Chemical mapping of a 177-nucleotide RNA with 2A3 and DMS.
2A3 adducts were read by reverse transcription with SuperScript II with manganese.
The data come from the RNA Mapping Database (RMDB), library OK1LIB.
High 2A3 reactivity points to a flexible backbone, as in loops and unpaired stretches.
Conditions: 150 mM KOAc, 10 mM MgCl2 and 150 mM bicine (pH 8.5), 24 C.
The 2A3 profile rests on 8,974 reads.
RNA sequence: GGGAACGACUCGAGUAGAGUCGAAAAGAAGACAAAUCAUUCAGGAAAGCACUGAGCCUCAGAAGGCACCCACUUGAACUGAAGCCCUUGUCUCAUGGAGCUGAAGUACUUGUCUUGGGACCACAACCGAAAUAGGCUAGUUCGCUAGCCUAUUUCGAAAAGAAACAACAACAACAAC
Reactivity to 2A3 in 0.01 (KOAc 150mM, MgCl2 10mM, bicine 150mM(pH8.5), 24C), signal-to-noise 8, nucleotides 027 to 126: g090a010a000g040a020c040a010a060a050u090c040a100u090u050c010a010g060g080a150a040a020g050c030a030c070u050g020a020g020c010c010u060c050a090g040a110a070g070g000c030a130c010c010c000a030c010u040u050g040a090a050c020u020g010a010a010g020c000c000c010u090u070g070u050c030u020c080a060u110g030g030a080g050c010u020g010a030a000g020u030a050c010u020u060g030u040c020u050u060g040g010g030a030c020c000a020c020a060a060c080
Reactivity to DMS in 0.01 (KOAc 150mM, MgCl2 10mM, bicine 150mM(pH8.5), 24C), signal-to-noise 3, nucleotides 027 to 126: g000a090a020g020a050c040a050a050a060u000c060a120u010u010c040a090g010g000a090a120a050g010c030a050c030u010g000a100g000c030c020u010c080a050g000a070a070g000g010c020a120c010c020c050a100c090u030u000g000a130a160c040u000g030a150a070g000c000c010c000u020u000g000u000c050u050c040a050u020g010g000a070g000c040u040g000a160a000g020u010a100c080u010u000g010u020c070u000u010g020g000g000a250c020c010a070c130a060a060c220